RNA sequence: GGGAACGACUCGAGUAGAGUCGAAAACACUCGUGGCGAUCACCCGCACAUCCUGGGGCGGGAUGCCCCACCCCGAGAGCAGCUCGCAGAAGUCCUUGAGUAUCUGGAGCGCGGCGAGCAUCGUCUCGAUACGGUAGGGCUUCGGCCCUACCGUAUCAAAAGAAACAACAACAACAAC
Reactivity to 2A3 in 0.01 (KOAc 150mM, MgCl2 10mM, bicine 150mM(pH8.5), 24C), signal-to-noise 1, nucleotides 027 to 126: c030a010c000u060c010g020u010g020g000c030g020a060u070c050a100c020c010c000g000c010a110c010a120u080c010c060u070g000g030g010g000c030g010g130g050a060u190g090c010c000c010c010a020c000c000c000c010g070a060g000a000g050c030a010g000c000u070c070g040c010a010g000a140a000g130u020c010c040u110u120g020a040g080u130a080u010c050u080g040g030a070g090c080g000c040g050g010c010g020a000g000c010a050u060c000g080u020c010u000c050
Reactivity to DMS in 0.01 (KOAc 150mM, MgCl2 10mM, bicine 150mM(pH8.5), 24C), signal-to-noise 1, nucleotides 027 to 126: c130a130c080u000c000g000u000g020g000c000g000a060u020c090a050c050c060c020g050c140a140c130a120u010c060c070u000g030g010g000g000c010g000g010g000a120u010g030c030c000c000c000a150c020c010c020c000g000a060g000a040g010c150a150g050c000u000c000g000c000a050g030a110a110g000u000c030c020u000u000g000a080g000u040a020u000c060u020g010g010a110g020c070g000c040g000g040c040g000a020g010c050a030u020c090g030u010c000u000c030
Chemical mapping of a 177-nucleotide RNA with 2A3 and DMS.
In probing experiments dimethyl sulfate is read out at A N1 and C N3, which are open when not base-paired.
As a SHAPE reagent, 2A3 marks flexible, mostly unpaired nucleotides at the ribose 2'-OH.
Conditions: 150 mM KOAc, 10 mM MgCl2 and 150 mM bicine (pH 8.5), 24 C.
The 2A3 profile rests on 1,358 reads.
It was measured as part of the RMDB library OK2TST.